[RMDB]
RNA sequence: GGGAACGACUCGAGUAGAGUCGAAAAAAUUCCAUUAAAAAAAGGUAAAAAGAAAAAUCUAUUCACUGAACUUGCCGAUAGAAUUUGCAAAUGUGUCAAGUGCAUCAAGGAGAAGAUAGAGGAGAAACUUUAAUUUAUUGUUCGCAAUAAAUUAAAGAAAAGAAACAACAACAACAAC
Reactivity to DMS in 0.01 (KOAc 150mM, MgCl2 10mM, bicine 150mM(pH8.5), 24C), signal-to-noise 1, nucleotides 027 to 126: a050a130u010u000c020c020a120u110u040a020a000a100a220a040a040a080g000g000u000a020a040a160a120a040g020a070a020a080a120a020u050c020u000a060u000u000c010a040c040u030g030a060a080c030u030u000g000c060c020g020a080u040a040g000a080a180u010u000u000g000c030a050a020a100u030g000u050g000u000c020a070a040g010u010g000c050a040u010c030a020a060g000g010a040g000a050a020g000a040u030a020g000a080g000g020a150g000a070a070a160
Reactivity to 2A3 in 0.01 (KOAc 150mM, MgCl2 10mM, bicine 150mM(pH8.5), 24C), signal-to-noise 1, nucleotides 027 to 126: a000a000u220u010c000c000a020u000u030a070a030a020a020a000a040a080g020g000u110a100a030a000a070a000g120a020a210a010a000a000u090c060u070a180u010u130c010a000c030u030g100a090a010c010u010u030g000c010c030g000a000u000a040g160a110a110u130u090u130g020c010a000a000a070u060g040u000g090u130c050a080a130g020u000g090c040a030u060c090a160a060g130g000a060g020a070a000g060a070u060a030g050a010g010g090a040g020a040a040a000

Conditions: 150 mM KOAc, 10 mM MgCl2 and 150 mM bicine (pH 8.5), 24 C.
This 177-nucleotide RNA was probed chemically with DMS and 2A3.
For DMS the reverse transcriptase was MarathonRT.
The DMS profile rests on 1,386 reads.